[RMDB]
Notes:
An RNA of 177 nucleotides, treated with DMS and read out base by base. Reactivities are given for positions 27 through 126. DMS adducts were read by reverse transcription with MarathonRT. Source: RMDB library TTRDES, as collected in RNAgym. The reactions ran in a buffer of 150 mM KOAc, 10 mM MgCl2 and 150 mM bicine (pH 8.5), at 24 C.
RNA sequence: GGGAACGACUCGAGUAGAGUCGAAAAGAUAUGGAGCGGUGGACUCUUGGACCGACUUCGGAAACGAAGUCGCUAGAGUAACCACACGCUCCUAAGUCAAAGUUGCCCCGCUUCGGCGGGGCAACAACAGUUACAAUCCGUUCGCGGAUUGUAACUGAAAAGAAACAACAACAACAAC
Reactivity to DMS in 0.01 (KOAc 150mM, MgCl2 10mM, bicine 150mM(pH8.5), 24C), signal-to-noise 1, nucleotides 027 to 126: g000a030u000a300u000g020g010a000g020c000g030g040u010g040g010a160c010u000c000u000u010g050g000a180c300c010g010a000c040u000u000c000g000g000a150a120a300c000g010a010a010g000u000c010g050c020u020a000g000a040g030u010a030a090c010c010a010c010a100c030g010c010u000c000c000u000a000a110g010u000c040a090a110a180g000u000u000g000c000c000c010c030g030c030u000u000c300g040g070c010g030g050g020g000c020a000a010c000a040a160